RNA sequence: GGGAACGACUCGAGUAGAGUCGAAAAUUGUAUCCACAGGAUAGAGCAUCACAUAUUGUCUUAGCAUAACAUCGGAAAGAAAAUAGGCUUGGUAAUCUUGUGUGUUUGGAUUGACUGCCUUUAUCCCGUAGUGCUGUGGUUUCGACCACAGCACUACAAAAGAAACAACAACAACAAC
Reactivity to DMS in 0.01 (KOAc 150mM, MgCl2 10mM, bicine 150mM(pH8.5), 24C), signal-to-noise 1, nucleotides 027 to 126: u000u060g000u030a040u000c010c100a080c130a090g000g000a080u000a040g010a050g000c050a030u020c030a030c100a100u000a020u000u000g020u020c020u000u000a050g020c050a070u010a080a100c190a100u000c070g000g000a080a050a110g000a020a050a050a180u000a030g000g000c010u000u000g000g000u000a060a050u000c050u000u000g000u000g000u000g000u010u000u010g020g000a050u000u010g000a080c120u000g020c030c000u000u010u010a090u020c010c030c040
Reactivity to 2A3 in 0.01 (KOAc 150mM, MgCl2 10mM, bicine 150mM(pH8.5), 24C), signal-to-noise 1, nucleotides 027 to 126: u070u130g030u070a020u000c000c000a020c050a070g040g000a020u030a050g050a010g040c060a010u130c010a050c000a090u090a100u090u030g070u000c000u120u060a040g040c030a080u070a200a040c060a070u100c030g070g150a200a090a020g000a030a020a110a040u120a070g000g040c030u010u070g000g040u070a030a010u010c070u110u000g030u030g000u040g080u120u110u050g070g000a010u000u040g060a010c030u010g050c010c000u080u000u100a090u030c000c000c000

Chemical mapping of a 177-nucleotide RNA with DMS and 2A3. The reactions ran in a buffer of 150 mM KOAc, 10 mM MgCl2 and 150 mM bicine (pH 8.5), at 24 C. 2A3 adducts were read by reverse transcription with SuperScript II with manganese. Values cover nucleotides 27 to 126. The 2A3 profile rests on 814 reads. DMS adducts were read by reverse transcription with MarathonRT.